Chemical mapping of a 177-nucleotide RNA with 2A3 and DMS. For DMS, 1,499 sequencing reads were counted. Source: RMDB library OK1LIB, as collected in RNAgym. Conditions: 150 mM KOAc, 10 mM MgCl2 and 150 mM bicine (pH 8.5), 24 C. For 2A3, 643 sequencing reads were counted.
[RMDB]
RNA sequence: GGGAACGACUCGAGUAGAGUCGAAAAAAGCAAGCAGUACCUAAUGAAACUAGUUUGAAUUUAACGUUUGCAACAGCAGGUAAAGAAACUAGCCAAAACGUUUCUGUUGAUUAUCAAGACCCAAUGGGGGAGACGGAUUAUUCGUAAUCCGUCUCCCAAAAGAAACAACAACAACAAC
Reactivity to 2A3 in 0.01 (KOAc 150mM, MgCl2 10mM, bicine 150mM(pH8.5), 24C), signal-to-noise 1, nucleotides 027 to 126: a000a000g010c040a020a000g010c020a000g000u040a060c060c000u150a180a090u130g130a190a090a050c000u010a040g060u040u000u000g150a180a070u180u000u040a130a050c180g080u000u150u010g070c100a200a120c020a140g030c010a080g000g100u180a030a030a030g070a020a030a020c010u000a040g080c050c000a000a000a200a000c050g000u000u070u090c000u000g180u000u110g090a150u060u050a080u170c070a090a070g010a020c000c000c070a000a140u030g070g030
Reactivity to DMS in 0.01 (KOAc 150mM, MgCl2 10mM, bicine 150mM(pH8.5), 24C), signal-to-noise 2, nucleotides 027 to 126: a070a010g000c120a080a030g000c060a060g020u000a110c060c050u000a030a110u000g000a190a100a240c000u020a010g030u000u030u000g000a300a060u010u000u010a060a040c090g000u000u000u020g020c000a130a030c250a150g000c030a020g000g000u000a000a030a000g000a010a000a000c000u050a050g000c070c090a130a070a040a200c160g020u000u000u000c000u000g000u040u000g000a000u000u000a050u040c180a050a140g040a090c000c000c000a020a010u040g040g000